[RMDB]
RNA sequence: GGGAACGACUCGAGUAGAGUCGAAAAAAGUUCUUCGGAACUUCAAUUUACCUUUGUGGUCACGAAGUGUGGCAAGCUGGACGACCCAUUGGGUCGAGAACCAGUGAUGACCCACAUGGAGUGACCACUCUGGUUGAGCGCGGCAUUCGUGCCGCAAGACUCCUAUACACUUCGGUGUAUAGGAGUCAAAAGAAACAACAACAACAAC
Reactivity to 2A3 in 0.01 (KOAc 150mM, MgCl2 10mM, bicine 150mM(pH8.5), 24C), signal-to-noise 4, nucleotides 027 to 156: a000a010g030u030u010c030u040u070c260g070g000a010a010c010u090u050c050a130a150u050u190u300a040c010c000u000u010u040g000u010g000g000u000c010a010c010g020a030a030g020u010g010u000g040g000c040a070a050g010c010u030g060g030a280c020g000a010c020c020c100a300u160u300g020g010g000u010c020g040a040g060a130a060c000c010a020g000u000g080a080u090g010a030c020c000c000a000c000a000u010g010g000a030g010u000g000a000c000c000a000c000u000c000u000g000g000u010u070g090a070g120c110g010c000g010g000c010a030u040u090c220g130u070g000c010c000g000c000a010a010
Reactivity to DMS in 0.01 (KOAc 150mM, MgCl2 10mM, bicine 150mM(pH8.5), 24C), signal-to-noise 2, nucleotides 027 to 156: a000a020g000u000u000c010u010u020c260g040g010a020a020c010u000u000c040a090a120u000u000u000a040c000c010u000u010u000g040u000g040g010u000c010a010c020g010a300a300g040u000g030u010g010g000c010a050a170g020c030u030g010g000a270c040g000a010c010c000c020a300u000u000g060g010g030u030c000g000a010g030a100a140c010c020a010g010u000g000a110u000g010a030c300c000c010a020c050a020u010g000g000a300g020u000g010a010c000c000a000c000u000c010u000g000g020u020u000g010a090g030c170g000c000g010g000c000a060u010u000c150g020u000g050c020c000g100c000a000a220